[RMDB]
RNA sequence: GGGAACGACUCGAGUAGAGUCGAAAAACUGCACACACACGGGCACACUCGUGACGACUUGGAGCUGUGCGUCUAUGGGUGGCUCAAAGUAGUCAACCCACUUUAAGCGGGUGGAGGUGGCUGAGUGCUGGCUCGUGGCUUUCGAGCCACGAGCCAGAAAAGAAACAACAACAACAAC
Reactivity to 2A3 in 0.01 (KOAc 150mM, MgCl2 10mM, bicine 150mM(pH8.5), 24C), signal-to-noise 1, nucleotides 027 to 126: a000c140u000g000c000a000c000a000c000a000c000a010c080g010g000g000c230a120c000a000c110u000c000g000u000g050a000c000g000a000c000u070u100g180g090a020g120c290u120g000u290g080c150g000u050c000u150a230u180g000g060g000u000g140g020c000u000c000a040a120a040g300u290a000g000u050c000a030a110c000c020c000a000c000u000u160u130a000a020g120c180g000g170g000u110g030g150a160g050g050u000g030g030c060u060g030a030g060u110g020
The record gives the reactivity of an RNA of 177 nucleotides to 2A3. The data come from the RNA Mapping Database (RMDB), library OK1LIB. 2A3 adducts were read by reverse transcription with SuperScript II with manganese. Conditions: 150 mM KOAc, 10 mM MgCl2 and 150 mM bicine (pH 8.5), 24 C. The 2A3 profile rests on 316 reads. Values cover nucleotides 27 to 126.